RNA sequence: GGGAACGACUCGAGUAGAGUCGAAAAUGAUCGAGAGAUCUAAUUAUGUACGCGAGUCAAGUGCACAGACUCGAGCGAAAGCUCGGUCGAAAGACCGCGUACAUGUACCGGCAAGUGUACAGUCGAAGGAGUACUAUUAUUUCGAUAAUAGUACUCCAAAAGAAACAACAACAACAAC
Reactivity to DMS in 0.01 (KOAc 150mM, MgCl2 10mM, bicine 150mM(pH8.5), 24C), signal-to-noise 9, nucleotides 027 to 126: u010g010a010u000c000g000a290g000a230g010a010u000c000u010a070a110u000u000a020u000g010u000a010c000g010c000g000a050g010u000c000a060a080g020u000g000c020a010c030a300g000a010c000u010c010g010a010g010c000g010a120a100a170g010c000u000c000g010g000u000c000g000a090a090a130g000a010c010c000g010c010g000u000a000c000a000u000g000u000a070c160c020g010g000c070a050a070g010u000g000u000a010c020a300g000u000c030g010a160a170
Reactivity to 2A3 in 0.01 (KOAc 150mM, MgCl2 10mM, bicine 150mM(pH8.5), 24C), signal-to-noise 2, nucleotides 027 to 126: u090g000a000u000c010g010a010g010a010g000a100u000c000u010a050a100u140u170a010u020g000u010a000c010g010c010g020a030g030u010c030a180a120g020u010g040c020a010c000a010g010a000c010u020c110g000a010g000c010g070a120a010a000g000c000u000c000g000g000u000c010g020a050a020a010g000a000c010c000g000c000g000u000a000c000a000u010g010u000a030c010c010g000g010c060a170a150g010u010g010u040a020c030a020g040u020c030g030a110a060

An RNA of 177 nucleotides, treated with DMS and 2A3 and read out base by base. The reactions ran in a buffer of 150 mM KOAc, 10 mM MgCl2 and 150 mM bicine (pH 8.5), at 24 C. The DMS profile rests on 25,002 reads. DMS adducts were read by reverse transcription with MarathonRT. The data come from the RNA Mapping Database (RMDB), library OK2TRN. The 2A3 profile rests on 22,336 reads.